An RNA of 207 nucleotides, treated with DMS and 2A3 and read out base by base. Values cover nucleotides 27 to 156. 2A3 adducts were read by reverse transcription with SuperScript II with manganese.

[RMDB]
RNA sequence: GGGAACGACUCGAGUAGAGUCGAAAACAUAUCGGCAAUGGGCACGGUGCCACCAUAUUCCUUGGGCAGGAUGGCGGGAUCGAUCUUUGUCUUCAAAAUGUCAACAUUCUUGUGCACCUGAAGGGGAAAAAAUCAAUACAAUCAGCACAUGUAUUAACAUAGGCAUCCAUUUCGAUGGAUGCCUAUGAAAAGAAACAACAACAACAAC
Reactivity to DMS in 0.01 (KOAc 150mM, MgCl2 10mM, bicine 150mM(pH8.5), 24C), signal-to-noise 1, nucleotides 027 to 156: c050a160u000a060u000c060g010g000c020a080a090u000g020g000g010c030a060c050g040g010u000g000c030c030a070c070c030a000u010a110u000u000c030c020u000u010g040g030g020c050a130g040g010a030u000g040g030c060g000g010g000a050u000c040g020a110u000c050u000u000u000g000u010c050u000u020c070a070a070a060a090u000g020u000c040a040a110c060a090u000u000c070u000u000g020u000g000c000a090c060c020u020g000a140a150g020g040g010g040a020a010a050a070a050a070u000c030a050a010u000a060c010a060a110u000c000a080g040c100a030c120a060u000g020u000a020u000u030a100a250
Reactivity to 2A3 in 0.01 (KOAc 150mM, MgCl2 10mM, bicine 150mM(pH8.5), 24C), signal-to-noise 6, nucleotides 027 to 156: c050a030u110a050u160c050g030g000c020a020a150u090g050g020g010c080a030c100g060g000u070g080c010c020a030c010c000a040u060a110u150u080c030c010u050u060g070g080g010c030a000g010g010a040u040g020g000c020g020g000g030a010u030c020g020a040u020c050u020u060u070g020u020c000u100u030c070a090a070a050a080u140g050u060c010a020a030c000a130u110u110c030u110u070g010u020g020c040a060c030c030u050g020a070a080g000g020g020g000a010a080a000a020a010a020u150c090a050a000u040a080c020a000a070u090c040a050g020c020a020c010a050u060g060u070a050u070u140a060a040